[RMDB]
This 207-nucleotide RNA was probed chemically with 2A3. The RNA was probed in 150 mM KOAc, 10 mM MgCl2 and 150 mM bicine (pH 8.5) at 24 C. For 2A3 the reverse transcriptase was SuperScript II with manganese. 2A3 is a SHAPE reagent: it acylates the 2'-hydroxyl of flexible nucleotides of all four kinds. It was measured as part of the RMDB library OK3TST.
RNA sequence: GGGAACGACUCGAGUAGAGUCGAAAAGCAAUCUGUAAAGAGAGCCGCGUGCCUUCGUGGAAAUCCAGGCUUGGACUGUCGGCUGUGGGGAGAGCUGAUUUUCAGUCUGGCUGGACGCAGAGUUCUGUAUUUUUGACGAGUCCAGGUGACUGAGAGACCACGGGUCAGCAUUCGUGCUGACCCGUGGAAAAGAAACAACAACAACAAC
Reactivity to 2A3 in 0.01 (KOAc 150mM, MgCl2 10mM, bicine 150mM(pH8.5), 24C), signal-to-noise 1, nucleotides 027 to 156: g050c010a020a070u000c020u030g120u300a080a120a050g130a020g010a020g020c000c000g060c000g010u060g030c000c040u110u180c040g000u040g080g070a150a130a030u030c060c000a000g060g000c060u050u090g010g000a020c060u020g040u060c010g010g060c020u010g060u210g020g010g010g000a010g000a000g070c010u000g000a060u120u000u040u130c000a000g000u000c000u020g120g130c020u000g020g020a000c000g000c070a010g080a030g070u260u050c130u080g100u070a220u130u120u080u070u130g160a030c030g040a020g000u000c000c000a030g070g060u060g040a000c010u020g020a010g000a010g030a020